[RMDB]
RNA sequence: GGGAACGACUCGAGUAGAGUCGAAAAUAUAGAACGGCACAAUUUUGUCGUUUGCACCGAUCGGUUACUUUCAUCAUCAACAUUGCAAUUUGAUGCUGUUAUACGACUGAAGUGUAGAGUGACUAGGAUAAUACCCAGGAUUCGUCCUGGGUAUUAUAAAAGAAACAACAACAACAAC
Reactivity to 2A3 in 0.01 (KOAc 150mM, MgCl2 10mM, bicine 150mM(pH8.5), 24C), signal-to-noise 7, nucleotides 027 to 126: u300a020u040a040g050a020a010c010g010g010c030a040c110a280a200u100u130u120u130g000u010c000g010u000u000u060g010c010a040c010c030g060a080u030c010g010g000u030u020a010c030u050u020u010c000a020u010c000a000u020c000a020a050c030a150u050u300g090c110a120a210u040u040u040g030a030u020g010c000u010g020u040u020a050u030a110c190g020a030c030u040g050a090a040g060u020g010u090a070g010a060g080u060g030a070c040u040a030g120g020
Reactivity to DMS in 0.01 (KOAc 150mM, MgCl2 10mM, bicine 150mM(pH8.5), 24C), signal-to-noise 9, nucleotides 027 to 126: u050a120u030a140g010a020a010c000g010g010c010a050c300a170a150u030u030u010u000g020u000c000g010u000u000u000g020c080a090c040c060g000a120u010c030g000g000u000u000a090c150u000u000u000c010a020u000c010a020u010c010a010a030c300a100u020u050g000c260a090a100u030u010u010g000a010u010g010c040u000g000u000u000a020u020a070c170g000a030c030u010g020a060a090g010u010g010u010a040g000a160g010u000g010a170c030u000a070g020g010
This 177-nucleotide RNA was probed chemically with 2A3 and DMS. High DMS reactivity at an A or C suggests that its Watson-Crick edge is free. The RNA was probed in 150 mM KOAc, 10 mM MgCl2 and 150 mM bicine (pH 8.5) at 24 C. The DMS profile rests on 22,181 reads.